RNA sequence: GGGAACGACUCGAGUAGAGUCGAAAACGCGUCAGAUUCGUCUGACGCGAAAGCAUAGAACAGCGCUAUCAUGUAUUAUAGUUCUAUGGAACUAUAGCGCUAAAACGAUACCGUUCGCGGUAUCGAAUACGAAGGAAUUCUUCGGAAUUCCUUCGUAAAAAGAAACAACAACAACAAC
Reactivity to 2A3 in 0.01 (KOAc 150mM, MgCl2 10mM, bicine 150mM(pH8.5), 24C), signal-to-noise 2, nucleotides 027 to 126: c010g040c010g010u000c020a010g000a060u030u060c120g070u050c080u000g000a030c000g000c000g000a000a000a000g050c010a070u050a140g070a160a030c040a060g000c000g000c020u040a030u180c110a130u170g250u290a190u210u100a090u140a020g010u000u000c050u080a300u240g160g000a010a000c000u000a000u020a050g000c020g000c020u050a000a050a010a050c030g000a000u010a000c000c000g020u000u050c210g020c020g110g000u010a000u000c000g010a000a000
Reactivity to DMS in 0.01 (KOAc 150mM, MgCl2 10mM, bicine 150mM(pH8.5), 24C), signal-to-noise 2, nucleotides 027 to 126: c020g000c000g010u000c000a000g020a050u010u020c210g030u000c000u000g000a000c010g020c000g000a010a040a110g010c090a040u000a090g000a120a100c180a050g020c000g030c000u000a070u020c110a070u000g010u000a080u010u000a060u000a020g000u000u000c000u000a090u030g050g010a000a020c000u000a030u000a000g020c030g020c020u000a020a070a080a160c020g000a000u000a000c000c000g020u000u000c150g030c020g040g000u000a000u000c000g020a100a100
Overview:
An RNA of 177 nucleotides, treated with 2A3 and DMS and read out base by base. The reactions ran in a buffer of 150 mM KOAc, 10 mM MgCl2 and 150 mM bicine (pH 8.5), at 24 C. The DMS profile rests on 1,235 reads. Reactivities are given for positions 27 through 126.